[RMDB]
RNA sequence: GGGAACGACUCGAGUAGAGUCGAAAAGUGGGACUCCCAGGAUGGGAUUAGUGUCCCCAUAAGGAGAGGAAGAGGGCUGGGUGCAGUGGCUCAUGCCUGUAAUCCCAGUACUUUGGGAGGCUGAGGCAUACGGGCUGUUAUUCGUAACAGCCCGUAUAAAAGAAACAACAACAACAAC
Reactivity to DMS in 0.01 (KOAc 150mM, MgCl2 10mM, bicine 150mM(pH8.5), 24C), signal-to-noise 1, nucleotides 027 to 126: g010u020g000g000g010a130c040u000c020c010c020a110g020g010a180u000g000g020g000a050u000u000a050g010u000g010u000c020c000c010c050a030u030a080a190g000g010a100g000a080g010g010a080a110g010a160g060g020g010c030u010g000g020g010u000g010c060a040g000u000g020g000c000u030c060a000u040g040c010c000u000g000u000a150a080u000c010c000c000a000g000u010a060c120u000u000u000g010g010g000a020g000g000c060u010g000a070g000g010c110